Structure probing data (2A3 and DMS) for a 177-nucleotide construct.
Source: RMDB library M2PK90, as collected in RNAgym.
[RMDB]
RNA sequence: GGGAACGACUCGAGUAGAGUCGAAAAAUAAAUAGUGCGUGGACGCACCCACGCAUUCAUGCGUAGGGAGUUGUUCGCAUUAGUACAGCUUAGCCUGUACUAAGCGAACAACAAGUACAACAAAAAAGAAUGGAGAGAUGUUCGCAUCUCUCCAUUCAAAAGAAACAACAACAACAAC
Reactivity to 2A3 in 0.01 (KOAc 150mM, MgCl2 10mM, bicine 150mM(pH8.5), 24C), signal-to-noise 1, nucleotides 027 to 126: a000u200a060a060a090u170a030g000u010g050c010g020u030g140g020a080c050g000c070a070c000c000c000a010c000g000c000a000u050u080c020a030u050g040c020g040u050a140g010g090g100a070g020u000u010g000u040u000c000g000c010a130u010u010a000g000u010a000c000a010g010c000u140u130a010g000c040c020u000g000u000a000c000u010a020a000g010c000g020a000a000c000a000a000c010a000a000g000u010a030c020a090a000c030a030a060a000a060a030a050
Reactivity to DMS in 0.01 (KOAc 150mM, MgCl2 10mM, bicine 150mM(pH8.5), 24C), signal-to-noise 2, nucleotides 027 to 126: a100u010a060a070a070u020a030g010u000g010c010g010u000g010g010a100c170g030c170a070c080c000c000a030c010g000c000a020u000u000c210a090u000g030c110g000u000a090g000g000g010a180g000u010u000g020u000u000c000g010c020a110u000u000a020g000u000a000c000a000g010c010u000u020a050g000c130c000u000g000u000a000c000u010a000a000g000c000g000a010a000c010a000a010c000a020a080g010u000a050c070a050a030c070a020a100a090a060a030a080